[RMDB]
The record gives the reactivity of an RNA of 177 nucleotides to 2A3 and DMS. 2A3 adducts were read by reverse transcription with SuperScript II with manganese. The 2A3 profile rests on 833 reads. The data come from the RNA Mapping Database (RMDB), library OK1LIB.
RNA sequence: GGGAACGACUCGAGUAGAGUCGAAAAUAUGGAAGAGAUGUUGAUCACGACAUCCUGCUCUAAGAAUUUCGGCUUGUACCGUGAGCGUACGGGAGCGGCGAUUGUGAUUGGGAAAAAUCAGCAAGAGGUCGGAUCACUCAUUCGUGAGUGAUCCGACAAAAGAAACAACAACAACAAC
Reactivity to 2A3 in 0.01 (KOAc 150mM, MgCl2 10mM, bicine 150mM(pH8.5), 24C), signal-to-noise 2, nucleotides 027 to 126: u300a070u100g000g040a050a000g010a040g000a020u020g010u090u050g020a130u240c090a090c200g000a000c030a020u000c000c030u030g120c020u020c030u030a040a080g070a180a120u000u010u020c000g000g000c020u050u070g190u250a020c010c040g000u070g060a080g070c020g000u020a060c000g000g000g000a010g020c020g010g040c110g020a040u030u060g050u040g020a030u110u130g040g030g010a000a230a000a000a000u040c020a000g000c050a080a000g030a040g170
Reactivity to DMS in 0.01 (KOAc 150mM, MgCl2 10mM, bicine 150mM(pH8.5), 24C), signal-to-noise 1, nucleotides 027 to 126: u140a020u010g000g000a080a050g000a040g010a040u010g000u000u000g000a200u000c150a030c020g000a130c090a060u050c000c000u000g000c040u010c000u000a020a130g000a150a110u000u000u000c000g000g010c010u010u000g020u090a140c000c000g000u020g070a010g100c150g040u050a110c120g030g080g000a000g030c130g020g010c000g000a000u000u050g070u060g000a090u060u220g000g030g040a030a100a000a070a040u050c000a110g020c160a060a010g110a100g010